[RMDB]
RNA sequence: GGGAACGACUCGAGUAGAGUCGAAAAGAUAUGGACGUUGGGGAGAGCCAGUGUCGGAAACGACACGGCUCGAAGAACCAACAAGACGUCCUAAGUCAAAAGUGUCCUAUCUUCGGAUAGGACACAACUUAUCCAAGCCGUUCGCGGCUUGGAUAAGAAAAGAAACAACAACAACAAC
Reactivity to DMS in 0.01 (KOAc 150mM, MgCl2 10mM, bicine 150mM(pH8.5), 24C), signal-to-noise 1, nucleotides 027 to 126: g010a010u000a120u010g010g000a030c010g000u000u000g010g010g030g020a020g010a000g010c000c010a150g000u000g000u000c010g020g000a030a060a080c000g010a010c010a000c120g000g020c000u000c000g000a050a120g030a150a260c040c010a000a100c190a100a130g000a170c100g010u000c000c000u000a030a100g000u010c070a070a040a040a160g030u020g000u010c000c000u000a000u000c000u000u010c190g010g000a030u010a000g000g010a000c000a000c000a010a020